[RMDB]
This 207-nucleotide RNA was probed chemically with 2A3. The reactions ran in a buffer of 150 mM KOAc, 10 mM MgCl2 and 150 mM bicine (pH 8.5), at 24 C. It was measured as part of the RMDB library RNAMAK. 2A3 adducts were read by reverse transcription with SuperScript II with manganese.
RNA sequence: GGGAACGACUCGAGUAGAGUCGAAAAUGAUGUUUCGACAUCAAAUAUCGGGGUCGACCUGAUAGGCCUUUUGACGAGCUGAAGCCUCCACGGCUCGAUAAGGAACUACCUAUUUAAGGUCGACGGAGGCACCCUUGCACAUCUGUUCGCAGAUGAAGCUCCAUCAGUGAUUCGUCACUGAUGGAGCAAAAGAAACAACAACAACAAC
Reactivity to 2A3 in 0.01 (KOAc 150mM, MgCl2 10mM, bicine 150mM(pH8.5), 24C), signal-to-noise 2, nucleotides 027 to 156: u160g070a090u140g060u100u100u080c160g020a020c030a170u050c040a170a040a000u250a030u060c030g000g000g020g030u020c000g000a000c000c000u000g020a000u000a000g030g050c030c040u060u090u010u140g300a130c040g000a000g030c000u000g050a060a020g030c020c030u010c000c000a010c020g010g040c000u020c010g000a030u110a060a030g050g030a150a210c120u140a090c180c000u010a030u000u080u040a120a030g020g000u000c000g000a000c000g020g030a000g000g010c000a000c000c010c000u030u250g050c130a070c000a010u020c010u010g100u200u120c300g080c080a000g000a010u090g040a070a000